[RMDB]
RNA sequence: GGGAACGACUCGAGUAGAGUCGAAAAUUCUGCCUAUCUGUUGUUCAUAAUCAACUGCGUAGUUCUGGUGAAGGAGUAAAUUAAACUGCCUCGCACCGCCGUACUCAUUUUUACCUCGAGUAUGGUGUCCUAAUUUAAGAUUCGUCUUAAAUUAGGAAAAAGAAACAACAACAACAAC
Reactivity to 2A3 in 0.01 (KOAc 150mM, MgCl2 10mM, bicine 150mM(pH8.5), 24C), signal-to-noise 7, nucleotides 027 to 126: u040u010c010u060g130c010c010u090a070u060c040u050g020u030u010g010u040u120c080a060u160a200a110u110c030a040a030c020u040g010c040g050u030a020g050u090u040c080u120g050g020u030g030a060a020g010g050a010g020u070a020a100a110u160u200a130a140a040c030u160g100c000c010u010c020g040c020a030c020c010g000c000c000g000u010a000c000u010c020a070u060u080u150u180u200a160c030c050u090c100g000a000g000u000a010u020g010g020u020g010
Reactivity to DMS in 0.01 (KOAc 150mM, MgCl2 10mM, bicine 150mM(pH8.5), 24C), signal-to-noise 9, nucleotides 027 to 126: u010u010c040u010g010c090c020u010a050u000c050u000g010u000u000g010u000u020c160a100u020a090a090u020c080a040a060c060u010g000c120g010u010a060g010u010u000c060u000g020g020u010g010a140a040g000g010a060g000u010a060a060a110u020u030a060a090a080c040u010g010c010c010u000c100g010c030a050c100c010g000c010c010g020u000a000c010u020c010a100u010u020u010u020u030a120c240c160u010c140g000a010g010u000a000u000g000g010u000g000